[RMDB]
RNA sequence: GGGAACGACUCGAGUAGAGUCGAAAAGAAGAGAAGCGCGCGAAUUGGAAACCAGCGAACCGUAUUACGCGCGCAAGGAACCGGGCCUUGGUUCAUUGGAAAGAAUAGAUAAUAUCGCUGGUAAAGACAGGUACGCAUAGUUCGCUAUGCGUACCUGAAAAGAAACAACAACAACAAC
Reactivity to 2A3 in 0.01 (KOAc 150mM, MgCl2 10mM, bicine 150mM(pH8.5), 24C), signal-to-noise 2, nucleotides 027 to 126: g120a020a000g050a000g090a120a090g010c000g000c000g000c010g050a010a010u080u070g060g040a100a130a060c000c010a030g000c010g030a030a100c000c000g020u100a030u050u070a080c000g030c000g000c000g010c000a000a030g080g000a010a010c000c010g030g100g060c100c010u050u300g000g010u000u000c000a010u090u180g130g090a120a030a050g030a090a040u170a100g100a110u070a120a040u140a140u090c000g030c000u010g000g010u040a030a000a000g080a000
Reactivity to DMS in 0.01 (KOAc 150mM, MgCl2 10mM, bicine 150mM(pH8.5), 24C), signal-to-noise 1, nucleotides 027 to 126: g000a190a040g000a300g070a170a080g000c020g020c000g040c140g000a130a070u050u000g040g000a190a130a000c020c000a040g000c000g080a090a170c000c120g000u000a010u000u000a030c000g000c070g000c000g020c010a000a010g010g010a020a010c030c000g050g000g080c010c020u040u110g000g000u000u000c070a160u030u030g000g000a150a030a040g040a040a050u120a200g000a230u030a000a130u000a150u000c030g070c000u070g000g000u010a080a050a020g000a130
Source: RMDB library OK1LIB, as collected in RNAgym.
Structure probing data (2A3 and DMS) for a 177-nucleotide construct.
For DMS, 1,166 sequencing reads were counted.
For DMS the reverse transcriptase was MarathonRT.
Conditions: 150 mM KOAc, 10 mM MgCl2 and 150 mM bicine (pH 8.5), 24 C.